[RMDB]
RNA sequence: GGGAACGACUCGAGUAGAGUCGAAAAACUGCGGUAUUCGUACCGCAGUACAUAAAAAGGAUAAAAUACCAGUAGCCCGAAACGCAAGCGACCACUACUGGCGCAAGAACCACUUCGGUGGUUCUAAGCUUUAAUGCUGCUUCGGCAGCAUUAAAGCAAAAGAAACAACAACAACAAC
Reactivity to DMS in 0.01 (KOAc 150mM, MgCl2 10mM, bicine 150mM(pH8.5), 24C), signal-to-noise 3, nucleotides 027 to 126: a040c000u000g010c000g010g000u000a010u000u020c210g040u000a010c000c000g010c000a000g000u000a040c140a060u010a020a070a050a130a110g010g010a130u000a080a070a060a080u000a130c010c000a020g000u000a010g000c030c020c300g010a020a050a050c080g000c240a080a090g000c030g010a190c070c090a120c030u000a020c040u000g000g010c110g000c150a120a050g010a000a010c010c000a000c010u000u010c150g000g020u000g000g000u000u000c000u000a060a120
Reactivity to 2A3 in 0.01 (KOAc 150mM, MgCl2 10mM, bicine 150mM(pH8.5), 24C), signal-to-noise 3, nucleotides 027 to 126: a000c000u000g000c010g000g000u010a030u020u060c150g020u050a010c000c010g000c000a000g000u020a000c000a000u270a010a140a010a040a000g110g010a080u210a160a220a060a050u170a180c010c020a010g010u010a010g020c010c060c040g020a080a070a010c060g000c150a080a070g050c030g060a090c000c030a020c040u090a010c020u020g050g000c020g000c010a020a000g000a000a000c000c000a000c010u060u120c240g080g000u000g000g000u010u000c010u000a010a000